[RMDB]
RNA sequence: GGGAACGACUCGAGUAGAGUCGAAAACCUGUUAUCUGACCAAUAACAGAAUGCACCACAGCGUAAAAUCAUCUGAUUGGGUGAGUUGGUCGCACCGCCAUUUGACGAGCGAACGCCAAGCCUAAGCACUACGAGUAUGUGUUCGCACAUACUCGAAUCAGACUAGUAGUUUCGACUACUAGUCUGAAAAAGAAACAACAACAACAAC
Reactivity to DMS in 0.01 (KOAc 150mM, MgCl2 10mM, bicine 150mM(pH8.5), 24C), signal-to-noise 3, nucleotides 027 to 156: c060c000u000g010u000u000a010u000c010u000g050a080c050c050a300a000u000a020a030c000a040g000a120a120u010g010c060a140c010c020a060c040a070g010c050g050u000a060a050a100a100u000c050a070u010c030u000g000a110u010u000g010g010g000u000g020a300g010u000u000g010g010u000c020g000c010a040c010c000g040c050c020a200u010u000u000g010a050c020g010a100g020c030g000a050a060c030g010c040c010a030a250g000c040c020u000a060a060g000c050a120c010u000a150c010g000a030g010u000a010u010g020u010g030u000u000c300g060c020a000c000a010u000a010c000u000c000g030a030a090
Reactivity to 2A3 in 0.01 (KOAc 150mM, MgCl2 10mM, bicine 150mM(pH8.5), 24C), signal-to-noise 9, nucleotides 027 to 156: c000c000u000g000u000u010a020u010c020u000g010a010c010c010a010a010u010a000a000c000a010g070a110a100u130g040c060a040c030c020a030c040a030g040c020g040u080a040a090a070a080u060c040a030u010c050u110g090a190u120u170g080g000g000u010g010a040g010u010u050g020g000u010c020g020c020a030c020c010g030c020c010a080u090u070u130g060a050c040g020a020g050c040g030a080a020c030g010c030c030a040a030g020c010c030u120a100a030g050c050a050c130u180a060c050g000a000g000u000a010u000g020u000g020u020u060c180g040c080a000c000a000u000a000c000u010c000g000a010a030
An RNA of 207 nucleotides, treated with DMS and 2A3 and read out base by base. High 2A3 reactivity points to a flexible backbone, as in loops and unpaired stretches. For 2A3, 10,208 sequencing reads were counted. For 2A3 the reverse transcriptase was SuperScript II with manganese. DMS adducts were read by reverse transcription with MarathonRT.